[RMDB]
The record gives the reactivity of an RNA of 177 nucleotides to 2A3 and DMS. The DMS profile rests on 3,082 reads. For 2A3 the reverse transcriptase was SuperScript II with manganese. It was measured as part of the RMDB library OK1LIB. The RNA was probed in 150 mM KOAc, 10 mM MgCl2 and 150 mM bicine (pH 8.5) at 24 C.

RNA sequence: GGGAACGACUCGAGUAGAGUCGAAAAGUCAAACCGGACAACAGUAUGGUAGGGAAACAAUAGGUUGUCCAAUUGGAAACUACAUUCCUGAAUGGAACGACUUAGUGUAUCAUCAAGAUUUUAAAACAUACGGAUUCAUGUUCGCAUGAAUCCGUAUAAAAGAAACAACAACAACAAC
Reactivity to 2A3 in 0.01 (KOAc 150mM, MgCl2 10mM, bicine 150mM(pH8.5), 24C), signal-to-noise 4, nucleotides 027 to 126: g050u040c020a070a020a090c050c030g040g000a020c020a050a010c010a060g170u100a070u120g080g080u040a090g070g050g040a010a180a000c020a050a050u070a060g050g000u000u000g010u000c000c000a000a020u090u050g030g080a080a010a000c060u140a040c110a100u020u000c000c000u030g060a070a070u140g030g020a060a110c050g040a010c030u040u050a050g030u020g050u190a040u110c050a030u020c070a120a040g080a170u070u100u090u300a050a070a000a020c100
Reactivity to DMS in 0.01 (KOAc 150mM, MgCl2 10mM, bicine 150mM(pH8.5), 24C), signal-to-noise 2, nucleotides 027 to 126: g010u000c050a020a070a100c040c080g010g000a060c050a060a070c120a090g000u020a050u000g000g000u020a080g000g060g010a070a120a080c020a040a080u000a000g010g020u000u000g010u010c000c020a000a050u010u000g030g020a030a040a050c170u010a090c190a140u020u000c040c000u020g000a100a080u010g020g000a000a060c030g010a040c030u000u000a010g000u000g020u000a030u020c010a020u030c100a040a060g030a130u000u020u020u010a010a130a040a060c240